[RMDB]
This 177-nucleotide RNA was probed chemically with DMS and 2A3.
Conditions: 150 mM KOAc, 10 mM MgCl2 and 150 mM bicine (pH 8.5), 24 C.
RNA sequence: GGGAACGACUCGAGUAGAGUCGAAAAGGGAGCGAGUUCGCUCGCUCCCAAACCCGAUGAAGCGGCACUUACGGAGCUUCAUACAUCUAAGAAGUGCAAUAUAAAGCGGUAGCUUCGGCUACCGCAAGUUAGGUAAGCACUUCGGUGCUUACCUAACAAAAGAAACAACAACAACAAC
Reactivity to DMS in 0.01 (KOAc 150mM, MgCl2 10mM, bicine 150mM(pH8.5), 24C), signal-to-noise 1, nucleotides 027 to 126: g000g000g020a000g020c000g020a040g060u000u000c250g020c000u000c000g060c000u020c000c000c000a020a050a060c020c000c040g000a030u010g000a010a060g000c010g020g050c000a040c040u000u030a300c150g030g010a210g000c000u000u020c000a080u050a080c130a030u000c140u000a080a110g020a060a060g050u000g010c030a120a170u020a110u010a060a110a140g000c000g020g000u000a000g000c000u000u000c260g000g000c000u000a000c000c000g000c000a000a000
Reactivity to 2A3 in 0.01 (KOAc 150mM, MgCl2 10mM, bicine 150mM(pH8.5), 24C), signal-to-noise 1, nucleotides 027 to 126: g030g010g000a000g000c020g000a000g000u020u010c040g030c050u000c020g040c000u020c000c010c000a030a000a000c010c010c000g000a050u030g000a020a020g070c060g010g080c050a000c020u030u140a060c150g140g000a010g000c050u000u020c000a010u040a000c030a070u120c040u190a090a020g070a110a000g050u000g020c070a090a000u300a020u090a120a130a010g010c000g000g030u020a000g020c000u040u000c200g040g000c000u000a030c010c000g000c010a000a000

For DMS, 832 sequencing reads were counted. The data come from the RNA Mapping Database (RMDB), library M2PK50.